Annotation
An RNA of 177 nucleotides, treated with 2A3 and DMS and read out base by base. Source: RMDB library OK2TRN, as collected in RNAgym.
[RMDB]
RNA sequence: GGGAACGACUCGAGUAGAGUCGAAAAUGAGAGAUAGGGCUCAUGUCCUCGUGGAACUCAGCCUGGGGCCAAGGGGCUGACAUGCAAACAGCGCCCCUCAUUCUUCUCCAUAUUCACAAGGUAACUCUAAUGCUAGCUCAUUCGUGAGCUAGCAUUAAAAAGAAACAACAACAACAAC
Reactivity to 2A3 in 0.01 (KOAc 150mM, MgCl2 10mM, bicine 150mM(pH8.5), 24C), signal-to-noise 1, nucleotides 027 to 126: u010g000a020g010a000g040a100u140a180g030g000g000c010u030c070a010u090g070u110c000c000u030c020g080u050g080g030a180a140c020u020c070a030g040c030c020u070g080g010g010g000c030c010a010a000g000g000g000g000c030u000g020a090c010a030u160g030c000a000a140a080c010a070g000c020g050c040c000c010c000u010c010a080u120u030c020u000u000c020u000c010c030a040u050a080u120u090c080a060c030a110a060g080g010u080a170a020c010u070c020
Reactivity to DMS in 0.01 (KOAc 150mM, MgCl2 10mM, bicine 150mM(pH8.5), 24C), signal-to-noise 3, nucleotides 027 to 126: u000g000a060g030a110g010a160u020a120g000g020g000c020u000c050a020u000g000u010c010c040u000c130g010u000g010g030a080a120c090u010c070a070g030c070c010u010g010g000g000g040c060c050a110a080g000g010g000g010c080u010g010a050c130a040u010g010c290a080a120a110c140a040g000c190g040c010c010c010c020u000c050a030u000u000c100u000u000c020u000c010c040a070u000a070u000u010c080a090c110a080a080g020g000u000a080a130c170u000c100